[RMDB]
RNA sequence: GGGAACGACUCGAGUAGAGUCGAAAAAUAGGCUUAUCAAGGGAGGUGGAGGGACUGGCCCGAUGAAACCCGGCAGCCAGAAAUGGUACCAAUUCCUGCAGCGGAAACGUUGAAAGAUGAGCCGAUGCUAGAGCUACCUUCGGGUAGCUCAAAAGAAACAACAACAACAAC
Reactivity to DMS in 0.01 (KOAc 150mM, MgCl2 10mM, bicine 150mM(pH8.5), 24C), signal-to-noise 2, nucleotides 027 to 129: a120u110a100g000g030c060u060u030a040u020c020a070a190g000g140g020a100g040g040u010g000g000a000g060g080g000a010c120u060g030g080c040c070c080g100a080u030g040a110a010a070c000c000c000g000g050c150a210g070c000c070a000g040a060a130a080u100g010g030u080a280c040c000a040a070u060u000c040c000u030g020c060a040g050c050g000g020a000a090a100c000g030u000u040g010a100a020a060g000a000u060g070a010g030c010c010g020a000u040g020c050u030a110
Reactivity to 2A3 in 0.01 (KOAc 150mM, MgCl2 10mM, bicine 150mM(pH8.5), 24C), signal-to-noise 2, nucleotides 027 to 129: a000u180a030g010g000c000u000u020a030u040c030a040a070g020g000g000a020g070g040u090g030g080a090g020g060g050a000c010u000g000g050c030c000c010g050a070u160g080a030a060a020c040c020c000g020g030c040a010g000c000c000a000g010a000a090a000u040g030g010u010a040c030c020a010a040u030u000c000c000u010g030c010a010g010c000g000g030a080a030a030c010g000u000u030g020a060a050a060g000a020u020g000a000g000c000c000g000a010u070g010c070u090a030
The data come from the RNA Mapping Database (RMDB), library 15KLIB. The record gives the reactivity of an RNA of 170 nucleotides to DMS and 2A3. The reactions ran in a buffer of 150 mM KOAc, 10 mM MgCl2 and 150 mM bicine (pH 8.5), at 24 C. DMS adducts were read by reverse transcription with MarathonRT. DMS (dimethyl sulfate) methylates the pairing face of unpaired adenines and cytosines. 2A3 adducts were read by reverse transcription with SuperScript II with manganese.